The record gives the reactivity of an RNA of 207 nucleotides to DMS and 2A3.
The 2A3 profile rests on 7,709 reads.
DMS adducts were read by reverse transcription with MarathonRT.
RNA sequence: GGGAACGACUCGAGUAGAGUCGAAAAAUCACAUAGGGAUGUGAGACCACCAGUGGAACUGCCAAAGAGUAGUAGUUAAACACAUGGACUUGGAAUUGGAGACACCUAGAUUCAAGUCCAGACCCUGCUGUGGUCUGUGGGGAUGCUGGGUGCAUUAGAUUUAUGCUAUAUUCGUAUAGCAUAAAUCAAAAGAAACAACAACAACAAC
Reactivity to DMS in 0.01 (KOAc 150mM, MgCl2 10mM, bicine 150mM(pH8.5), 24C), signal-to-noise 4, nucleotides 027 to 156: a090u000c040a060c040a100u000a140g020g000g020a140u000g020u010g000a120g020a050c030c000a040c030c060a050g020u000g020g000a050a080c020u000g000c010c000a060a110a170g020a250g030u000a030g000u000a030g010u010u000a070a100a110c060a080c090a170u000g010g010a030c020u020u010g020g010a030a120u000u010g020g010a210g020a220c150a130c060c020u010a130g000a200u000u000c000a010a010g020u000c000c010a030g000a080c040c050c010u000g020c070u000g030u000g000g020u000c020u000g030u000g000g010g000g030a130u000g010c080u010g020g010g020u000g000c060a110u000u000a180
Reactivity to 2A3 in 0.01 (KOAc 150mM, MgCl2 10mM, bicine 150mM(pH8.5), 24C), signal-to-noise 7, nucleotides 027 to 156: a000u110c050a030c040a090u160a080g050g040g040a060u070g060u020g040a020g010a010c000c000a000c000c020a010g010u110g080g030a040a020c000u000g000c020c020a220a230a080g090a050g030u080a010g010u010a010g010u060u170a070a200a000c070a010c030a140u030g000g000a000c000u010u010g060g050a040a070u080u080g050g020a150g030a100c060a080c030c010u040a050g000a210u000u000c000a010a000g010u000c010c000a000g010a030c010c000c010u030g010c080u090g030u040g010g000u000c010u000g010u040g000g000g000g010a030u120g050c080u060g020g010g010u050g020c030a050u060u150a040